This 170-nucleotide RNA was probed chemically with DMS. It was measured as part of the RMDB library 15KLIB.
[RMDB]
RNA sequence: GGGAACGACUCGAGUAGAGUCGAAAAUGAACAUUGCUAAAUGUUCCCGUAUCAUUCCUGCAAAGGCACGUGUUGAGUGCUAUGACAGGUUUAAAGUUAAUGAGACAAAUUCUCAAUAUUUGUUUAGUAGGUGCCGGCUUCGGCCGGCACAAAAGAAACAACAACAACAAC
Reactivity to DMS in 0.01 (KOAc 150mM, MgCl2 10mM, bicine 150mM(pH8.5), 24C), signal-to-noise 3, nucleotides 027 to 129: u040g000a060a070c030a060u000u000g000c250u050a120a130a020u000g000u000u000c010c130c050g000u050a120u050c030a020u030u030c000c000u010g000c060a030a160a290g000g110c000a070c000g000u020g040u030u000g000a090g070u000g020c000u000a210u000g000a230c030a060g000g020u000u000u000a080a070a060g000u030u030a040a100u070g020a070g040a080c130a050a040a130u030u010c080u140c080a090a040u050a240u030u000u130g030u000u000u100a000g030u160a050g000
The reactions ran in a buffer of 150 mM KOAc, 10 mM MgCl2 and 150 mM bicine (pH 8.5), at 24 C.